[RMDB]
RNA sequence: GGGAACGACUCGAGUAGAGUCGAAAAGCCAGAGUGUGAGAGCGCGGCAGUGAGACUGCGGGGGAUAAGCUUCGUAGUCGAGAGGGAAACAGCCCAGAUCGCCGGCUAAGGCCCCUAAGCGUGUACUCUAACACUGACGUUUCGACGUCAGUGUUAGAAAAGAAACAACAACAACAAC
Reactivity to 2A3 in 0.01 (KOAc 150mM, MgCl2 10mM, bicine 150mM(pH8.5), 24C), signal-to-noise 2, nucleotides 027 to 126: g010c000c000a020g010a040g070u140g010u000g040a100g010a000g020c060g000c080g080g000c010a060g060u030g030a110g010a010c000u000g000c000g000g020g000g020g040a210u200a300a090g080c000u010u010c010g020u030a000g000u030c000g010a000g030a040g000g030g000a050a160a020c030a090g040c000c000c000a040g000a110u060c010g010c070c020g000g000c000u030a020a050g110g000c060c000c000c000u030a020a000g010c010g060u030g010u070a040c030u010
Reactivity to DMS in 0.01 (KOAc 150mM, MgCl2 10mM, bicine 150mM(pH8.5), 24C), signal-to-noise 2, nucleotides 027 to 126: g000c000c000a070g000a130g020u030g000u010g000a090g030a030g050c000g040c000g000g000c070a010g000u000g020a300g000a080c000u000g000c000g100g020g000g000g010a130u040a100a080g000c010u000u000c060g060u000a030g020u010c000g000a110g000a200g030g000g000a230a270a220c210a080g000c020c000c000a130g000a070u000c090g010c050c130g010g010c000u000a090a090g010g030c070c000c000c000u020a090a100g050c060g040u000g000u040a080c100u000

About this RNA: This 177-nucleotide RNA was probed chemically with 2A3 and DMS. For 2A3 the reverse transcriptase was SuperScript II with manganese. In probing experiments dimethyl sulfate is read out at A N1 and C N3, which are open when not base-paired. The reactions ran in a buffer of 150 mM KOAc, 10 mM MgCl2 and 150 mM bicine (pH 8.5), at 24 C.